[RMDB]
RNA sequence: GGGAACGACUCGAGUAGAGUCGAAAAGCAAACAUCGAAAGAUCAAACGGUAGAAAAGAUGGUUUGAAAACCUCGCCUUCUACCAAGUGAAUAUCACAAUAGGCGAAAGUACGAAAGUACAAAAAAACGUUUAUAUUAGCUUCGGCUAAUAUAAACGAAAAGAAACAACAACAACAAC
Reactivity to 2A3 in 0.01 (KOAc 150mM, MgCl2 10mM, bicine 150mM(pH8.5), 24C), signal-to-noise 2, nucleotides 027 to 126: g020c030a000a040a080c020a060u060c020g060a150a040a040g040a010u040c060a040a010a090c080g000g020u020a000g000a020a040a000a010g060a070u160g010g060u010u090u140g130a160a140a010a010c000c010u010c010g010c000c020u010u010c000u010a010c000c000a010a000g000u000g010a120a060u140a100u250c040a040c020a130a170u110a150g020g000c000g010a120a020a000g000u000a010c010g030a090a020a030g000u000a030c000a000a080a020a000a010a020a040
Reactivity to DMS in 0.01 (KOAc 150mM, MgCl2 10mM, bicine 150mM(pH8.5), 24C), signal-to-noise 2, nucleotides 027 to 126: g010c060a070a060a070c100a020u000c010g000a120a140a180g000a030u000c170a040a150a130c110g000g010u000a010g000a020a020a020a080g010a070u030g000g000u000u010u020g010a110a050a090a040c010c000u000c000g000c020c010u000u010c000u000a010c000c000a040a170g030u000g040a060a080u030a080u020c060a060c060a100a080u020a000g000g000c000g000a080a080a110g000u000a000c010g000a070a030a170g010u000a000c000a000a000a050a040a060a040a110
An RNA of 177 nucleotides, treated with 2A3 and DMS and read out base by base. 2A3 adducts were read by reverse transcription with SuperScript II with manganese. It was measured as part of the RMDB library M2PK90.